[RMDB]
Source: RMDB library 15KLIB, as collected in RNAgym.
The record gives the reactivity of an RNA of 170 nucleotides to DMS and 2A3.
The reactions ran in a buffer of 150 mM KOAc, 10 mM MgCl2 and 150 mM bicine (pH 8.5), at 24 C.
Reactivities are given for positions 27 through 129.
2A3 adducts were read by reverse transcription with SuperScript II with manganese.
RNA sequence: GGGAACGACUCGAGUAGAGUCGAAAAUCCAGCUAAAGAGUGGAGGAAAUCUCGGAAAGCUUCCCCCAAGAAGAACUGGGACGCUCUCAAGAAGGAGGAGAUUUCCCGAAAGCUGGAGACUCGCGGAUAGGUGUGGUCUUCGGACCACACAAAAGAAACAACAACAACAAC
Reactivity to DMS in 0.01 (KOAc 150mM, MgCl2 10mM, bicine 150mM(pH8.5), 24C), signal-to-noise 3, nucleotides 027 to 129: u040c000c010a070g060c040u000a090a110a100g040a090g000u030g040g050a230g040g020a060a000a000u020c040u050c070g070g040a020a090a030g010c010u010u020c080c000c010c170c080a010a010g070a090a010g010a000a000c190u010g020g000g000a000c000g060c000u000c020u020c050a110a110g030a090a040g000g000a080g050g000a040g010a060u060u020u010c010c000c000g030a050a090a040g010c000u060g010g000a000g000a070c030u000c030g080c070g030g010a090u030a060g000
Reactivity to 2A3 in 0.01 (KOAc 150mM, MgCl2 10mM, bicine 150mM(pH8.5), 24C), signal-to-noise 4, nucleotides 027 to 129: u000c000c010a000g010c030u110a050a190a000g190a060g080u220g040g030a090g020g010a020a010a020u000c000u020c010g120g040a080a040a000g000c000u050u040c040c000c000c030c030a060a040g130a070a040g000a120a060c120u060g010g010g000a000c030g000c030u000c020u000c060a000a140g110a120a000g170g020a040g070g000a000g010a000u010u000u000c000c040c010g050a040a020a000g000c000u000g000g000a000g030a010c000u060c030g090c030g060g050a050u050a140g030